This 177-nucleotide RNA was probed chemically with 2A3 and DMS.
[RMDB]
RNA sequence: GGGAACGACUCGAGUAGAGUCGAAAAGAAGUGUCGCGGCAGUCGCGUGAUGCUACAUCCACGGUCAGCGGUAGUACCUCGGUCGGCGGGGAGUAGCGGCGGGAGACUAGUCGCGCUUUGCCGUGGGCCGCGUAUGUACGUUCGCGUACGUACGCGGAAAAGAAACAACAACAACAAC
Reactivity to 2A3 in 0.01 (KOAc 150mM, MgCl2 10mM, bicine 150mM(pH8.5), 24C), signal-to-noise 3, nucleotides 027 to 126: g030a010a020g050u030g030u070c000g000c010g040g000c030a020g040u080c030g010c010g030u010g020a080u070g000c000u010a010c020a060u020c010c000a020c000g010g010u030c020a010g020c000g010g000u010a010g010u050a030c000c000u010c020g040g020u050c000g030g050c040g000g020g010g000a090g010u050a000g010c000g000g000c000g010g020g020a060g000a020c010u020a030g000u010c010g000c000g000c020u020u020u040g000c000c010g000u040g000g030g000
Reactivity to DMS in 0.01 (KOAc 150mM, MgCl2 10mM, bicine 150mM(pH8.5), 24C), signal-to-noise 4, nucleotides 027 to 126: g000a130a060g010u000g000u010c020g000c010g000g010c050a070g000u020c050g020c000g040u000g000a070u010g010c050u010a050c060a100u020c000c030a040c050g000g020u010c200a070g020c080g000g010u020a050g020u020a300c020c000u010c020g010g000u010c020g020g020c050g000g000g000g000a070g010u010a050g010c000g000g000c020g010g000g000a100g010a100c040u010a030g020u000c020g010c000g000c030u020u020u000g000c000c010g010u010g000g000g000
For 2A3 the reverse transcriptase was SuperScript II with manganese. DMS adducts were read by reverse transcription with MarathonRT. The reactions ran in a buffer of 150 mM KOAc, 10 mM MgCl2 and 150 mM bicine (pH 8.5), at 24 C.